[RMDB]
This 177-nucleotide RNA was probed chemically with DMS and 2A3. For DMS the reverse transcriptase was MarathonRT. It was measured as part of the RMDB library TTRDEL. Values cover nucleotides 27 to 126. The reactions ran in a buffer of 150 mM KOAc, 10 mM MgCl2 and 150 mM bicine (pH 8.5), at 24 C.

RNA sequence: GGGAACGACUCGAGUAGAGUCGAAAAGAUAUGGAGUAAGAACUACGAGUUUAAAGCGAAGAACUCGGAAACGAGGGAGCUUUGCACUCGCUUACUCCUAAGUCGCAGAGGUCGUUCGCGACCUCAAUCUGAGAUAGAACUUCGGUUCUAUCUCAGAAAAAGAAACAACAACAACAAC
Reactivity to DMS in 0.01 (KOAc 150mM, MgCl2 10mM, bicine 150mM(pH8.5), 24C), signal-to-noise 3, nucleotides 027 to 126: g000a060u000a300u010g010g000a030g010u000a010a010g020a160a090c110u020a300c040g000a010g000u000u010u000a000a010a010g000c020g000a110a130g000a150a170c000u010c010g010g010a110a100a110c010g010a000g030g000g000a110g000c000u000u000u000g020c120a020c000u000c030g000c000u010u000a010c000u010c000c000u000a010a060g000u000c010g010c180a130g000a010g000g010u000c010g000u000u010c210g010c010g030a000c000c000u000c010a030a070
Reactivity to 2A3 in 0.01 (KOAc 150mM, MgCl2 10mM, bicine 150mM(pH8.5), 24C), signal-to-noise 3, nucleotides 027 to 126: g020a010u090a040u200g010g010a000g020u020a000a020g030a160a060c120u210a080c300g000a000g000u050u050u080a030a010a010g000c050g140a300a030g020a100a070c020u000c000g020g000a100a070a010c010g000a000g020g030g000a030g000c000u010u010u040g020c020a010c010u000c020g010c000u000u000a000c000u000c000c000u020a050a040g040u000c010g000c120a020g000a010g000g010u000c000g000u070u120c220g020c020g130a000c000c000u000c000a000a030